[RMDB]
Chemical mapping of a 177-nucleotide RNA with DMS and 2A3.

RNA sequence: GGGAACGACUCGAGUAGAGUCGAAAAGUUCAGUCGUUCGCGACUGAACAAACUGUGAAGCGCGAAAACACAGAAAACAAACGGCAACGCGCGUUUCGCCGAAAACCCUGCAGUUCGCUGCAGGGAAGCCUAAGUAAAUCUUCGGAUUUACUUAGGCAAAAGAAACAACAACAACAAC
Reactivity to DMS in 0.01 (KOAc 150mM, MgCl2 10mM, bicine 150mM(pH8.5), 24C), signal-to-noise 4, nucleotides 027 to 126: g010u000u000c000a000g010u000c000g030u000u010c230g030c020g020a010c000u000g000a000a000c000a040a060a100c040u000g010u010g000a110a090g020c020g000c010g000a100a090a100a110c080a050c050a070g000a090a080a100a130c180a060a070a080c130g010g010c080a070a080c070g010c020g010c020g000u000u000u010c050g000c040c110g010a080a060a120a110c000c000c000u000g000c000a010g010u000u010c160g000c000u010g000c020a020g000g000g000a000a020
Reactivity to 2A3 in 0.01 (KOAc 150mM, MgCl2 10mM, bicine 150mM(pH8.5), 24C), signal-to-noise 5, nucleotides 027 to 126: g010u000u010c000a000g000u000c010g020u020u060c210g010c010g080a000c000u000g010a000a000c000a000a010a010c010u030g010u010g040a060a020g030c020g000c010g090a040a060a210a020c060a010c020a030g180a080a130a020a020c080a060a130a020c050g050g010c040a040a030c030g020c000g010c010g050u040u050u090c060g010c010c010g050a050a060a070a100c000c000c000u000g000c000a020g000u020u090c140g040c110u000g000c000a000g000g000g000a000a010

For 2A3, 9,711 sequencing reads were counted. Conditions: 150 mM KOAc, 10 mM MgCl2 and 150 mM bicine (pH 8.5), 24 C.